[RMDB]
Structure probing data (2A3 and DMS) for a 177-nucleotide construct. The reactions ran in a buffer of 150 mM KOAc, 10 mM MgCl2 and 150 mM bicine (pH 8.5), at 24 C.
RNA sequence: GGGAACGACUCGAGUAGAGUCGAAAAGAAAGAAAGAAAGAUGGCCAGUGAUGAGAUGAAACGUGAGUUGUGCAGACACUCCACUGAUACCAAAUGAAGCGCAGGGAUUAGUCCUUCUGAGGCCAAAUGCGGAAAAUAAAUUCGUUUAUUUUCCGCAAAAAGAAACAACAACAACAAC
Reactivity to 2A3 in 0.01 (KOAc 150mM, MgCl2 10mM, bicine 150mM(pH8.5), 24C), signal-to-noise 4, nucleotides 027 to 126: g070a030a060a000g090a030a080a000g090a020a080a000g090a090u090g040g030c030c030a040g050u030g020a050u050g030a030g020a080u070g070a020a080a010c060g050u060g060a070g040u110u060g020u060g050c030a020g050a070c000a000c020u040c020c020a030c030u030g020a050u090a180c000c020a020a020a200u170g040a120a000g010c030g000c040a020g010g000g060a010u040u060a020g040u060c030c000u000u050c010u060g090a080g000g070c000c000a040a040a000
Reactivity to DMS in 0.01 (KOAc 150mM, MgCl2 10mM, bicine 150mM(pH8.5), 24C), signal-to-noise 7, nucleotides 027 to 126: g010a070a090a120g010a090a060a070g000a100a080a100g010a110u010g000g010c030c010a050g000u010g000a080u030g010a080g000a030u000g010a070a050a080c090g010u010g010a080g010u000u010g020u010g020c120a060g000a100c070a050c030u010c030c030a080c030u000g000a100u030a100c060c060a030a080a080u020g000a090a080g000c070g010c050a030g000g000g000a060u010u020a130g010u020c030c020u000u000c030u010g000a130g010g020c010c040a010a040a090
About this RNA: It was measured as part of the RMDB libraries RFM100 and RFMREP. DMS adducts were read by reverse transcription with MarathonRT. Reactivities are given for positions 27 through 126.